An RNA of 177 nucleotides, treated with 2A3 and DMS and read out base by base.
For DMS, 2,753 sequencing reads were counted.
The RNA was probed in 150 mM KOAc, 10 mM MgCl2 and 150 mM bicine (pH 8.5) at 24 C.
RNA sequence: GGGAACGACUCGAGUAGAGUCGAAAAAGAUCUGGCAGUUGGAUCUCGGCCAGGCCGGUCAAUGGGCCCGAUCCCAUCCAGCGGAUGUCGUUGGCGAUCUUGGUCAGCGAUACCGCGAUCGUGCGCAAGCCGUAACCUAUUUCGAUAGGUUACGGCUAAAAGAAACAACAACAACAAC
Reactivity to 2A3 in 0.01 (KOAc 150mM, MgCl2 10mM, bicine 150mM(pH8.5), 24C), signal-to-noise 2, nucleotides 027 to 126: a000g020a020u010c000u020g020g010c010a050g020u100u090g090g060a060u050c050u090c080g070g000c030c030a140g020g170c040c030g030g020u080c010a040a090u100g000g220g000c000c030c040g000a030u020c010c040c000a080u060c050c020a010g000c000g040g010a110u050g010u000c000g000u000u020g010g000c000g090a150u040c050u120u190g050g020u000c000a010g010c000g000a000u010a020c000c000g000c020g020a050u120c070g040u160g030c100g000c110a070
Reactivity to DMS in 0.01 (KOAc 150mM, MgCl2 10mM, bicine 150mM(pH8.5), 24C), signal-to-noise 3, nucleotides 027 to 126: a070g010a050u000c000u010g010g000c010a300g000u010u010g000g000a090u010c070u000c080g010g010c040c110a100g020g000c010c000g020g000u000c080a110a080u000g000g000g000c030c020c070g000a050u000c010c030c010a090u000c060c080a190g020c030g010g010a140u000g010u000c000g030u000u000g000g020c010g020a080u000c150u010u010g010g000u010c010a020g000c000g000a010u000a010c000c010g010c040g010a030u000c120g010u000g030c070g020c110a150